About this RNA
An RNA of 177 nucleotides, treated with 2A3 and DMS and read out base by base.
RNA sequence: GGGAACGACUCGAGUAGAGUCGAAAAGGUCACUGGUUCGCCAGUGACCAAAGGCCGGAGAGAGAGAAGCCACUCACCGAAAGGACUCAGCGAAGCACCCAAAAACUACCUGGUUCGCCAGGUAGAACUUAUAUAUGCGUUUCGACGCAUAUAUAAGAAAAGAAACAACAACAACAAC
Reactivity to 2A3 in 0.01 (KOAc 150mM, MgCl2 10mM, bicine 150mM(pH8.5), 24C), signal-to-noise 4, nucleotides 027 to 126: g000g000u010c010a000c000u010g000g040u030u030c090g060c070c000a000g010u010g000a000c000c000a010a010a010g010g000c040c000g070g010a050g000a000g000a000g010a010g020a130a040g040c030c020a040c020u020c010a050c010c020g040a090a040a010g060g010a030c010u010c060a010g040c020g040a060a010g030c020a070c000c000c000a020a070a030a040a030c010u000a000c000c000u000g000g040u040u040c170g030c040c000a000g010g000u000a000g000a000a000
Reactivity to DMS in 0.01 (KOAc 150mM, MgCl2 10mM, bicine 150mM(pH8.5), 24C), signal-to-noise 5, nucleotides 027 to 126: g010g010u000c000a000c000u010g000g000u000u010c240g030c010c000a000g010u000g000a000c000c010a000a040a070g000g010c060c030g010g010a070g000a090g010a100g010a100g000a120a110g010c050c050a090c050u000c030a080c040c020g000a060a120a120g010g010a080c030u000c030a060g010c060g020a050a080g020c080a120c010c010c030a040a060a060a100a130c000u000a000c000c000u000g000g000u000u000c220g020c000c000a000g010g010u000a000g000a040a080